[RMDB]
RNA sequence: GGGAACGACUCGAGUAGAGUCGAAAAUUGUUCAAUCAGCGGAAAUUACAAAGGAGUAUUAGGUAUGACGAACAAGAAAACAUUCAAAUGUAACGCACACGCAGAUAUUCGUGACUACCAGCAACUACUCAUUACGCCCAUUCGUGGGCGUAAUGAGAAAAGAAACAACAACAACAAC
Reactivity to 2A3 in 0.01 (KOAc 150mM, MgCl2 10mM, bicine 150mM(pH8.5), 24C), signal-to-noise 2, nucleotides 027 to 126: u010u040g000u000u000c000a000a110u070c000a050g200c070g000g070a040a100a060u150u030a120c010a000a160a070g180g000a090g070u060a080u050u130a050g090g000u040a150u100g010a030c000g050a010a000c000a000a040g060a060a040a000a000c070a040u170u120c020a110a150a020u190g020u170a170a000c030g020c150a030c000a000c100g000c020a030g000a070u040a030u120u120c020g000u050g010a000c000u040a070c000c000a000g100c010a030a030c060u120a020
Reactivity to DMS in 0.01 (KOAc 150mM, MgCl2 10mM, bicine 150mM(pH8.5), 24C), signal-to-noise 1, nucleotides 027 to 126: u000u010g020u000u000c000a150a100u000c040a080g000c050g000g000a070a050a150u000u050a040c000a000a100a160g020g000a100g000u000a000u000u020a150g000g040u020a050u000g040a020c190g000a000a000c130a000a110g000a090a030a120a100c050a090u000u030c280a000a170a050u000g040u000a060a120c040g020c000a050c100a000c120g000c120a000g000a060u050a080u010u020c000g000u000g000a100c060u000a150c020c010a090g060c130a040a020c090u000a130
Chemical mapping of a 177-nucleotide RNA with 2A3 and DMS. For DMS the reverse transcriptase was MarathonRT. The 2A3 profile rests on 1,211 reads. Values are in units of 0.01, from 0 to 300, in steps of 10. High 2A3 reactivity points to a flexible backbone, as in loops and unpaired stretches. The data come from the RNA Mapping Database (RMDB), library OK1LIB. High DMS reactivity at an A or C suggests that its Watson-Crick edge is free. For DMS, 1,303 sequencing reads were counted.